Structure probing data (2A3 and DMS) for a 177-nucleotide construct. For 2A3 the reverse transcriptase was SuperScript II with manganese.
[RMDB]
RNA sequence: GGGAACGACUCGAGUAGAGUCGAAAAAGGAGUGGAGUGUGCGGGUUAAUUUGACUCAACGCGGGAAAACUUACCCGGGCAGGCGAUUGUUGUGAGAAGGAAUACCUGAUGAUAUCGCGCGUGGUGCAUGAUAAUCGAGUUUCGACUCGAUUAUCAUAAAAGAAACAACAACAACAAC
Reactivity to 2A3 in 0.01 (KOAc 150mM, MgCl2 10mM, bicine 150mM(pH8.5), 24C), signal-to-noise 3, nucleotides 027 to 126: a000g050g020a090g020u080g010g000a070g050u090g030u080g060c040g010g000g000u050u050a070a080u100u080u140g060a070c000u020c060a060a070c060g020c090g130g000g060a030a010a050a070c090u090u070a080c000c010c000g000g030g000c040a030g000g050c030g040a060u010u090g030u020u000g030u010g010a110g040a110a020g050g040a060a030u070a090c000c010u010g020a050u100g030a020u030a020u130c040g000c000g000c020g080u050g000g020u070g020c030
Reactivity to DMS in 0.01 (KOAc 150mM, MgCl2 10mM, bicine 150mM(pH8.5), 24C), signal-to-noise 5, nucleotides 027 to 126: a110g010g000a110g040u010g000g000a090g030u020g030u000g010c120g020g000g000u020u020a060a040u030u000u020g010a120c040u010c050a060a090c150g000c040g000g000g000a070a050a060a050c160u020u010a110c050c010c010g000g000g010c060a040g000g020c030g010a050u010u000g010u000u000g010u000g000a070g020a100a060g010g010a130a090u010a080c050c030u000g020a110u010g010a080u010a070u000c020g000c010g010c050g020u010g000g000u020g020c120